[RMDB]
The record gives the reactivity of an RNA of 177 nucleotides to 2A3.
For 2A3 the reverse transcriptase was SuperScript II with manganese.
Source: RMDB library OK1LIB, as collected in RNAgym.
RNA sequence: GGGAACGACUCGAGUAGAGUCGAAAACGUCCAAAAAAUGCCACCUUCAUUCGAUCACGUGAAAGAACCUUUGCAAUGGCCUCCACCCUGCUGGAGAAGGCGCACAGGUGCUCCAGCAUUUGUCGAAACUGCGACCUAGCUUCGGCUAGGUCGCAGUAAAAGAAACAACAACAACAAC
Reactivity to 2A3 in 0.01 (KOAc 150mM, MgCl2 10mM, bicine 150mM(pH8.5), 24C), signal-to-noise 1, nucleotides 027 to 126: c130g190u110c000c010a030a040a010a010a000a030u260g020c000c000a090c000c000u000u070c000a070u020u020c000g000a000u130c130a030c190g000u070g040a020a100a000g060a080a170c000c000u190u070u030g030c090a130a120u160g070g060c000c030u040c060c080a000c000c000c000u020g060c010u000g000g040a000g000a000a000g070g110c040g150c060a010c160a020g300g100u080g010c000u000c000c000a000g000c000a080u040u020u130g130u000c010g060a070a010